[RMDB]
RNA sequence: GGGAACGACUCGAGUAGAGUCGAAAAUGAGAGGCUCAUUGCUUGUGAAAAUCCAUUCAUGGUUAACCAAUUGGCUUAUAGCUCUAGUGCAAAUGGCAGCCUGGUUGGCACAACUUUGCAGGGCAAGGACUAACUGUUUGUUCGCAAACAGUUAGUCAAAAGAAACAACAACAACAAC
Reactivity to 2A3 in 0.01 (KOAc 150mM, MgCl2 10mM, bicine 150mM(pH8.5), 24C), signal-to-noise 3, nucleotides 027 to 126: u140g010a070g020a020g100g040c000u010c030a060u020u110g030c030u080u060g030u030g040a060a030a000a030u040c030c010a040u050u060c030a030u070g040g000u060u060a050a040c010c010a030a080u030u040g050g000c010u090u060a080u120a140g000c020u000c040u070a070g060u040g080c010a030a040a070u050g020g000c020a000g030c000c010u050g070g030u070u030g000g000c010a020c000a050a070c040u010u080u050g000c030a020g050g000g000c030a010a010g060
Reactivity to DMS in 0.01 (KOAc 150mM, MgCl2 10mM, bicine 150mM(pH8.5), 24C), signal-to-noise 3, nucleotides 027 to 126: u000g010a070g030a110g010g010c050u000c090a080u010u010g030c120u000u020g020u010g000a110a040a090a100u000c000c010a040u000u000c070a030u010g020g010u010u000a090a110c070c020a070a110u010u000g010g030c060u010u000a120u010a100g010c070u000c110u000a060g010u000g010c060a000a030a080u000g000g040c100a070g010c010c000u000g000g010u000u000g010g010c120a070c060a030a070c080u000u010u000g010c050a050g000g000g010c040a040a130g020
Conditions: 150 mM KOAc, 10 mM MgCl2 and 150 mM bicine (pH 8.5), 24 C. This 177-nucleotide RNA was probed chemically with 2A3 and DMS. It was measured as part of the RMDB library 15KREP. For DMS, 2,331 sequencing reads were counted.